[RMDB]
RNA sequence: GGGAACGACUCGAGUAGAGUCGAAAAGAGCUUUUUUUCGAAAAAGCUCCGGCGCAAUGCCUAUGUGUACACUUCACAAGGGUUUGUGGUGGUGAAUGGCAAUACCAGCAAUCUUCGGAUUGCUGAAUAUUUAGAAUAUUUUCGAAUAUUCUAAAUAAAAAGAAACAACAACAACAAC
Reactivity to DMS in 0.01 (KOAc 150mM, MgCl2 10mM, bicine 150mM(pH8.5), 24C), signal-to-noise 2, nucleotides 027 to 126: g000a020g000c000u000u010u000u010u000u000u010c090g000a030a010a000a010a010g010c000u000c000c060g020g000c080g030c050a040a060u000g010c000c010u020a080u000g010u000g010u010a140c090a050c090u000u000c010a030c020a020a250g010g040g010u020u000u010g020u000g020g020u000g000g020u000g000a080a070u000g000g000c030a060a110u000a120c220c010a000g010c000a000a020u000c000u000u010c150g020g000a010u000u000g020c000u000g000a030a070